[RMDB]
RNA sequence: GGGAACGACUCGAGUAGAGUCGAAAAAGGGCAGGGUGAAAUUCCCGAUCGGCGGUAAAGUCCGCGAGCCGAACGAAAAAGGUUUGGAAGGAACCGGUGAGAUUCCGGUACCGACAGUAUAGUCUGGAUGACCACUUCAGCUUCGGCUGAAGUGGAAUCCUAUCUUUAACUUCGGUUAAAGAUAGGAAAAAGAAACAACAACAACAAC
Reactivity to DMS in 0.01 (KOAc 150mM, MgCl2 10mM, bicine 150mM(pH8.5), 24C), signal-to-noise 2, nucleotides 027 to 156: a120g000g030g030c030a130g020g000g070u000g020a080a190a280u000u010c000c030c010g020a070u000c020g010g000c010g030g030u000a120a130a080g010u000c020c020g010c000g000a300g030c000c000g000a030a300c020g040a080a070a090a150a180g000g010u000u010u000g000g020a200a170g000g000a010a040c010c000g000g020u000g000a230g000a300u000u000c000c000g030g000u000a010c020c000g010a070c010a050g020u000a230u000a040g030u000c010u000g000g000a100u000g020a180c000c000a000c010u000u010c030a000g030c000u000u000c300g060g040c020u000g000a000a020g020u000g010g020a010a000

Chemical mapping of a 207-nucleotide RNA with DMS. Conditions: 150 mM KOAc, 10 mM MgCl2 and 150 mM bicine (pH 8.5), 24 C. The data come from the RNA Mapping Database (RMDB), library M2RFPK. Reactivities are rounded to 0.1 and cut off at 0 and 3.